[RMDB]
Conditions: 150 mM KOAc, 10 mM MgCl2 and 150 mM bicine (pH 8.5), 24 C. Structure probing data (2A3 and DMS) for a 207-nucleotide construct. It was measured as part of the RMDB library M2RFPK. DMS adducts were read by reverse transcription with MarathonRT. The DMS profile rests on 4,271 reads.
RNA sequence: GGGAACGACUCGAGUAGAGUCGAAAACGGUUUCGCCUUCUUUACCGUUAUCAAGGAAGGUACUCGGCCAUGCUAAGGGAAGCAUUAUUCCUUAGGCGCAUGUCGCCGCCAGCAUGGUGUGAGGGGAAAAAGUAUGCUGGGUUCGCCCAGCAUACAACAUUAUAGCCGAGUUCGCUCGGCUAUAAUGAAAAGAAACAACAACAACAAC
Reactivity to 2A3 in 0.01 (KOAc 150mM, MgCl2 10mM, bicine 150mM(pH8.5), 24C), signal-to-noise 2, nucleotides 027 to 156: c000g000g020u020u000u000c050g010c000c000u010u000c000u010u000u010a020c000c030g180u090u130a040u050c080a000a000g010g000a000a000g010g010u050a040c000u000c020g010g000c000c000a000u000g010c010u030a060a070g000g000g000a030a010g020c100a180u100u140a170u220u020c010c000u030u070a070g000g000c010g000c030a130u280g130u300c030g000c030c000g020c020c020a000g000c000a000u010g000g020u030g180u180g040a030g050g030g010g080a020a090a000a050a020g000u010a000u000g000c000u000g000g030g040u040u030c100g110c030c000c000a000g000c000a000u000a000c000a010a000
Reactivity to DMS in 0.01 (KOAc 150mM, MgCl2 10mM, bicine 150mM(pH8.5), 24C), signal-to-noise 2, nucleotides 027 to 156: c000g000g030u000u010u000c010g000c000c000u000u000c000u010u000u000a030c010c000g020u020u000a010u000c080a030a000g000g010a030a030g010g020u010a020c020u020c000g010g000c000c010a030u000g020c010u000a210a130g000g040g030a020a060g030c160a240u010u010a140u000u000c010c000u010u010a080g040g020c000g030c020a080u010g000u010c000g040c030c000g010c130c070a050g020c000a020u000g010g010u000g010u000g000a070g030g000g010g020a080a100a090a120a130g020u010a020u000g010c010u000g000g010g050u010u010c300g010c000c030c000a010g000c000a000u000a010c010a080a120